[RMDB]
RNA sequence: GGGAACGACUCGAGUAGAGUCGAAAAAGCGCAUUGGCGGGGCAGGCCAUAGUGCAGGCGCCGCAGGCAAUGCAUUGAUCGGCAUCAUAUUGUGGUUUGCCACGGAAUCCGUGACUGACCUCAAGUGGUGUUUCGAUAGCUUCGGCUAUCGAAACACAAAAGAAACAACAACAACAAC
Reactivity to 2A3 in 0.01 (KOAc 150mM, MgCl2 10mM, bicine 150mM(pH8.5), 24C), signal-to-noise 1, nucleotides 027 to 126: a010g150c070g010c000a020u020u020g040g000c020g040g010g060g010c030a010g040g010c040c000a280u240a080g180u300g060c040a000g030g050c160g080c050c000g000c000a010g090g060c060a010a000u010g000c030a000u070u100g060a070u150c090g050g000c030a040u000c020a020u240a280u180u000g020u020g030g000u000u040u040g000c020c000a000c010g000g010a290a130u090c050c060g000u000g020a010c000u050g010a020c040c000u060c030a010a020g010u020g010
Reactivity to DMS in 0.01 (KOAc 150mM, MgCl2 10mM, bicine 150mM(pH8.5), 24C), signal-to-noise 1, nucleotides 027 to 126: a070g000c210g030c010a040u000u000g010g020c000g010g000g000g000c020a060g000g000c000c000a230u000a130g020u010g020c020a020g020g000c030g030c030c000g000c040a070g030g060c020a020a010u000g010c000a160u010u000g000a120u000c070g020g020c020a050u000c010a010u000a050u000u010g010u000g000g010u000u000u000g010c000c000a010c020g000g020a200a140u020c020c000g020u000g000a040c010u000g000a020c000c010u010c010a000a000g000u010g000
Record summary: The record gives the reactivity of an RNA of 177 nucleotides to 2A3 and DMS. Conditions: 150 mM KOAc, 10 mM MgCl2 and 150 mM bicine (pH 8.5), 24 C.